[RMDB]
RNA sequence: GGGAACGACUCGAGUAGAGUCGAAAAUGGAUCUUGACCGUUGUCAAUGUUAACGUUGAUAUCACCAAAUGCAAAUUGCGAUGCACCGCGAUUGAUGCCAGCGCCGCCAGUUGUCACGCUUCCUACUUGACCGCCGUUUGCAUAACCUCGCAUCAUGGUGGAAGAUUACUUUCGAGUAAUCUUCCACAAAAGAAACAACAACAACAAC
Reactivity to DMS in 0.01 (KOAc 150mM, MgCl2 10mM, bicine 150mM(pH8.5), 24C), signal-to-noise 1, nucleotides 027 to 156: u030g000g070a100u010c030u000u030g000a100c030c060g020u070u020g040u000c040a060a110u020g000u000u000a110a060c090g050u010u000g040a020u000a080u000c020a110c000c000a050a160a080u020g050c060a030a060a110u000u000g040c000g020a160u020g020c030a080c060c040g070c050g000a100u000u000g000a110u010g000c000c050a080g000c020g000c050c110g000c040c020a210g020u000u000g010u000c100a060c030g050c000u000u000c020c010u000a060c040u000u000g000a040c030c050g030c020c050g020u000u010u010g030c040a020u000a090a090c030c020u010c070g070c070a070u000c020a080u010g020
Reactivity to 2A3 in 0.01 (KOAc 150mM, MgCl2 10mM, bicine 150mM(pH8.5), 24C), signal-to-noise 2, nucleotides 027 to 156: u100g000g030a050u040c030u040u140g030a060c020c050g020u060u060g010u000c020a040a030u020g010u080u110a130a050c030g000u020u040g050a050u020a100u170c070a030c080c000a000a000a140u080g000c030a040a040a120u080u060g030c030g020a030u130g060c030a040c120c000g030c020g050a040u020u150g020a010u090g040c020c030a010g030c020g000c030c000g020c020c020a070g040u090u030g060u080c050a020c100g010c030u050u050c020c010u070a120c050u020u040g050a090c010c000g000c000c000g030u030u040u060g000c020a010u020a130a090c010c030u010c030g020c000a070u060c010a030u120g070
An RNA of 207 nucleotides, treated with DMS and 2A3 and read out base by base. It was measured as part of the RMDB library OK3TST. DMS adducts were read by reverse transcription with MarathonRT.